[RMDB]
RNA sequence: GGGAACGACUCGAGUAGAGUCGAAAACGAAAAUGAGAGAAUUUAUAAGCCCGAUCUAUACAAUAACAUCAUUUUAAACCCAUUCCAUUUGAAUUGGGAUUUUAUCCAUCCUAAUUAUUGUGAAAAACGAUAUGUCGUAUUUCGAUACGACAUAUCGAAAAGAAACAACAACAACAAC
Reactivity to DMS in 0.01 (KOAc 150mM, MgCl2 10mM, bicine 150mM(pH8.5), 24C), signal-to-noise 2, nucleotides 027 to 126: c210g010a020a040a020a010u000g000a090g000a160g000a220a040u000u010u010a040u010a090a110g030c090c090c050g000a140u010c050u020a050u010a030c140a020a050u000a030a110c140a130u000c030a000u000u010u020u000a020a050a150c020c010c000a190u010u000c030c050a050u010u000u020g040a020a030u010u020g010g000g000a020u010u000u000u010a070u010c300c240a010u000c000c010u010a020a010u000u010a050u000u010g020u020g000a050a060a040a050a120
Reactivity to 2A3 in 0.01 (KOAc 150mM, MgCl2 10mM, bicine 150mM(pH8.5), 24C), signal-to-noise 2, nucleotides 027 to 126: c040g000a030a000a010a010u050g000a050g000a000g010a120a060u040u140u070a150u060a120a070g030c060c070c010g040a030u000c000u070a070u010a050c080a150a050u060a100a050c010a070u030c000a030u040u000u020u080a060a130a120c020c010c020a010u100u000c030c000a060u060u090u300g090a040a000u010u000g000g000g030a010u020u040u040u080a040u010c040c010a000u000c000c010u010a050a010u060u080a090u040u110g050u060g070a040a000a000a040a060
Source information
An RNA of 177 nucleotides, treated with DMS and 2A3 and read out base by base. Conditions: 150 mM KOAc, 10 mM MgCl2 and 150 mM bicine (pH 8.5), 24 C. Source: RMDB library OK2TRN, as collected in RNAgym. For 2A3 the reverse transcriptase was SuperScript II with manganese.